The record gives the reactivity of an RNA of 177 nucleotides to DMS and 2A3. For DMS the reverse transcriptase was MarathonRT. Source: RMDB library RFMREP, as collected in RNAgym. In probing experiments dimethyl sulfate is read out at A N1 and C N3, which are open when not base-paired. The reactions ran in a buffer of 150 mM KOAc, 10 mM MgCl2 and 150 mM bicine (pH 8.5), at 24 C. The DMS profile rests on 1,145 reads.
RNA sequence: GGGAACGACUCGAGUAGAGUCGAAAAUUCAGUCCCUAGUGUCGCUAGUAAUUAUAAAGCGAAGUCUUAUCAGACUAAUUGAUUGAACUUUAAUUUUCGGAUAAUCCCAUUCUCAGGAAUACGCUUCACUUACCCCUAUGUUCGCAUAGGGGUAAGUAAAAGAAACAACAACAACAAC
Reactivity to DMS in 0.01 (KOAc 150mM, MgCl2 10mM, bicine 150mM(pH8.5), 24C), signal-to-noise 2, nucleotides 027 to 126: u000u000c110a090g000u000c010c140c070u000a080g030u000g040u010c030g050c010u000a120g020u000a140a100u010u000a100u020a080a100a070g020c010g000a050a040g010u000c030u000u030a100u000c190a080g010a040c040u010a080a110u010u000g020a030u010u000g010a010a040c030u000u000u000a110a070u000u000u010u000c050g030g010a050u000a070a110u010c010c000c000a140u000u010c040u000c110a140g020g000a040a030u000a080c180g010c130u000u000c110
Reactivity to 2A3 in 0.01 (KOAc 150mM, MgCl2 10mM, bicine 150mM(pH8.5), 24C), signal-to-noise 1, nucleotides 027 to 126: u050u020c000a030g030u020c020c020c000u140a150g070u000g010u030c040g000c000u010a020g060u080a190a150u280u160a190u090a300a130a040g000c020g070a000a000g000u000c010u020u140a150u190c070a030g010a000c000u010a120a120u070u050g010a020u010u110g030a000a010c000u030u050u060a040a150u000u000u110u090c070g060g050a020u020a050a070u100c030c040c000a000u060u010c050u040c020a020g000g060a020a020u070a090c130g020c020u060u020c030